[RMDB]
RNA sequence: GGGAACGACUCGAGUAGAGUCGAAAAGGAGCCGACUGAAGCGAUGUUGGAGGCUGGUGGAGAUGUAGAGCAGAUCCACAUUGAGUGGGGUGUGGACCCGUAUGUUGAGAACACUUCAGAGGUAUGGAGAGCGAUGCUCGCUGCUCGUCCAAUCCGCAUGUCAUGUUAUGUUCGCAUAACAUGACAUAAAAGAAACAACAACAACAAC
Reactivity to DMS in 0.01 (KOAc 150mM, MgCl2 10mM, bicine 150mM(pH8.5), 24C), signal-to-noise 2, nucleotides 027 to 156: g000g030a110g010c030c030g000a140c050u010g000a050a070g020c030g020a080u000g020u000u000g020g000a100g000g000c050u000g000g050u010g000g010a080g000a110u010g030u000a090g000a130g010c060a120g000a170u000c010c010a020c030a080u000u010g000a140g040u010g020g020g000g020u000g010u020g010g000a050c030c010c050g020u000a060u000g010u000u000g020a120g020a060a080c030a050c020u000u000c040a090g000a140g000g010u000a090u000g010g010a290g000a050g030c030g000a130u010g020c050u000c030g000c020u020g010c010u000c020g020u010c000c040a060a300u000c010c010g000c170
Reactivity to 2A3 in 0.01 (KOAc 150mM, MgCl2 10mM, bicine 150mM(pH8.5), 24C), signal-to-noise 4, nucleotides 027 to 156: g070g010a020g030c010c010g040a080c060u080g000a080a020g020c060g090a060u040g050u090u090g020g010a040g060g040c070u050g040g020u060g000g020a070g000a050u080g010u180a060g000a000g040c040a020g020a080u000c020c000a020c030a030u040u170g030a040g060u070g000g010g000g000u020g010u000g010g000a020c010c030c040g040u160a120u100g060u000u040g050a070g050a110a020c060a030c040u060u060c040a040g030a060g090g020u070a110u130g020g010a010g000a010g020c020g030a040u150g020c020u010c040g020c050u030g010c000u010c020g070u010c020c000a010a040u020c020c010g040c060
Chemical mapping of a 207-nucleotide RNA with DMS and 2A3. The 2A3 profile rests on 3,023 reads. Source: RMDB library OK3TST, as collected in RNAgym. Reactivities are given for positions 27 through 156. Values are in units of 0.01, from 0 to 300, in steps of 10. The reactions ran in a buffer of 150 mM KOAc, 10 mM MgCl2 and 150 mM bicine (pH 8.5), at 24 C. The DMS profile rests on 5,664 reads.